[RMDB]
RNA sequence: GGGAACGACUCGAGUAGAGUCGAAAAGAUAUGGAUUGCACAGGGAGCGGAUAGUCGGAAACGACUAAUCGCUUUGAUCUGUGACAAUCCUAAGUCAAACCGGGAUUAUGUUCGCAUAAUCCCGGAACCUUAGUAAUACCUUCGGGUAUUACUAAGGAAAAGAAACAACAACAACAAC
Reactivity to 2A3 in 0.01 (KOAc 150mM, MgCl2 10mM, bicine 150mM(pH8.5), 24C), signal-to-noise 4, nucleotides 027 to 126: g030a000u050a020u120g010g000a000u000u010g010c000a000c010a000g020g080g140a070g020c010g010g010a030u010a010g000u000c020g010g020a050a030a020c010g010a000c000u000a010a060u030c000g000c000u270u070u190g060a050u010c000u000g000u010g040a000c000a010a000u000c000c010u000a050a010g040u020c050a070a070a130c010c000g000g010g000a000u000u000a000u020g060u050u110c300g000c210a000u000a000a000u030c010c010c010g000g000a000a000
Reactivity to DMS in 0.01 (KOAc 150mM, MgCl2 10mM, bicine 150mM(pH8.5), 24C), signal-to-noise 5, nucleotides 027 to 126: g000a030u000a300u010g000g000a020u000u000g010c010a020c000a010g010g020g000a020g040c000g020g010a070u000a000g000u000c000g000g000a060a060a160c000g010a010c000u000a000a020u010c000g010c010u000u000u020g020a080u010c000u000g020u000g000a150c000a010a010u000c000c000u000a020a100g010u000c030a090a150a230c010c000g010g000g010a010u000u000a000u000g010u000u010c240g010c000a010u000a000a000u000c000c000c000g000g000a010a020

Structure probing data (2A3 and DMS) for a 177-nucleotide construct. The reactions ran in a buffer of 150 mM KOAc, 10 mM MgCl2 and 150 mM bicine (pH 8.5), at 24 C. Reactivities are given for positions 27 through 126. Source: RMDB library TTRDES, as collected in RNAgym.